[RMDB]
RNA sequence: GGGAACGACUCGAGUAGAGUCGAAAACUCUUUUCUUGUUCCAUAUGAACUUCAAAGUAGUGUUUUCCAAUUCUGUGAAGAAAGUCAUUGGUAGCUUGAUGGGGAUGGCAUUGAAUCUAUAAAUUACCUUGGGGAGUAUGGCCAUUUUCAUGAUAUAUAUGGUCAUCAUAUUCGUAUGAUGACCAUAAAAAGAAACAACAACAACAAC
Reactivity to DMS in 0.01 (KOAc 150mM, MgCl2 10mM, bicine 150mM(pH8.5), 24C), signal-to-noise 3, nucleotides 027 to 156: c020u000c010u020u000u000u000c020u020u000g030u010u000c010c070a190u000a100u000g010a040a040c010u000u000c030a040a070a070g010u000a040g030u000g010u000u000u000u000c020c020a110a190u000u000c100u000g030u000g000a110a080g020a090a070a090g030u010c040a110u010u000g010g020u000a080g010c030u000u010g010a090u000g010g010g010g020a070u010g020g050c030a060u010u010g010a100a110u000c050u010a140u010a050a070a090u000u000a080c020c030u000u000g020g030g020g010a130g010u000a050u000g010g000c030c010a090u000u000u000u000c010a060u000g020a090u010a110u000a140
Reactivity to 2A3 in 0.01 (KOAc 150mM, MgCl2 10mM, bicine 150mM(pH8.5), 24C), signal-to-noise 2, nucleotides 027 to 156: c020u040c000u090u050u010u040c050u070u090g060u050u000c030c000a070u060a050u300g040a040a010c010u040u040c050a070a110a070g010u050a030g050u050g030u050u080u070u030c030c020a010a040u140u000c040u060g040u040g060a030a070g040a030a050a010g000u030c010a010u020u080g070g010u030a100g040c030u020u060g070a040u050g060g000g010g010a010u020g030g000c050a030u040u090g010a070a040u010c020u030a150u090a180a120a040u140u070a050c010c030u030u020g020g030g000g000a040g070u080a070u070g050g000c030c000a040u030u000u000u050c030a020u000g050a020u000a010u000a000
Structure probing data (DMS and 2A3) for a 207-nucleotide construct. The DMS profile rests on 5,579 reads. The 2A3 profile rests on 1,233 reads.